Chemical mapping of a 177-nucleotide RNA with 2A3 and DMS.

RNA sequence: GGGAACGACUCGAGUAGAGUCGAAAAGAUAUGGAUCUACUUGGAGUAAACACAUCGGAAACGAUGUGGUUUACUAUGAAGAGUAGAGUCCUAAGUCAAAAGCGCGAUGAGUUCGCUCAUCGCGCAAGAUGCUAUAUGUGUUCGCACAUAUAGCAUCAAAAGAAACAACAACAACAAC
Reactivity to 2A3 in 0.01 (KOAc 150mM, MgCl2 10mM, bicine 150mM(pH8.5), 24C), signal-to-noise 2, nucleotides 027 to 126: g000a000u010a000u030g010g000a000u010c000u010a000c010u020u030g010g030a010g000u010a000a000a010c010a000c000a030u000c000g000g010a020a000a000c010g000a000u000g000u010g000g000u000u000u000a000c000u030a300u040g000a000a010g000a000g000u000a000g010a010g040u010c000c000u000a000a000g000u010c010a010a040a190a080g000c000g000c030g000a000u000g000a010g070u060u250c290g080c150u000c000a000u000c000g000c000g020c000a000a000
Reactivity to DMS in 0.01 (KOAc 150mM, MgCl2 10mM, bicine 150mM(pH8.5), 24C), signal-to-noise 3, nucleotides 027 to 126: g000a010u000a020u010g000g000a140u000c000u010a000c000u000u000g010g000a010g010u000a010a000a020c010a000c000a010u000c000g010g000a010a000a010c000g020a020u010g010u000g010g010u010u000u010a010c000u010a300u010g000a130a170g000a010g000u000a000g010a070g010u000c000c000u000a010a080g000u000c010a100a090a110a120g010c000g010c000g000a010u000g000a030g020u000u000c240g010c000u000c000a010u000c000g010c000g000c000a000a030
DMS adducts were read by reverse transcription with MarathonRT. The data come from the RNA Mapping Database (RMDB), library TTRDEL. 2A3 adducts were read by reverse transcription with SuperScript II with manganese. For 2A3, 9,314 sequencing reads were counted.